[RMDB]
Chemical mapping of a 207-nucleotide RNA with 2A3.
RNA sequence: GGGAACGACUCGAGUAGAGUCGAAAAGGCGCUCCCCUCGAUCCACCUUCGAGGGGGUUCACACCUCCAACCGGCGGGCCGGCUACUCUUCUUUCCCUUCUCUCGUCUUCCUCGGUCAACCUCUUAAGUUCCUCUUCUUCCUCCUUGCUGAGGCUCUGGUAAAAUGUAACUUCGGUUACAUUUUACCAAAAGAAACAACAACAACAAC
Reactivity to 2A3 in 0.01 (KOAc 150mM, MgCl2 10mM, bicine 150mM(pH8.5), 24C), signal-to-noise 1, nucleotides 027 to 156: g030g020c030g000c120u080c000c030c030c030u010c050g030a060u110c120c080a120c080c070u050u020c030g000a040g020g000g030g010g000u040u030c010a030c000a030c040c000u040c000c020a060a080c030c040g000g020c010g020g010g020c020c070g030g000c000u080a080c030u060c050u110u020c040u070u050u070c020c000c000u090u050c060u030c010u040c040g040u000c040u080u040c020c040u030c040g040g020u030c020a080a070c020c030u050c010u080u100a090a010g030u030u000c010c000u070c090u080u010c000u010u000c040c010u020c000c010u150u220g070c120u050g060a010g030g010c010u000c000u000

2A3 adducts were read by reverse transcription with SuperScript II with manganese. Source: RMDB library VIROID, as collected in RNAgym.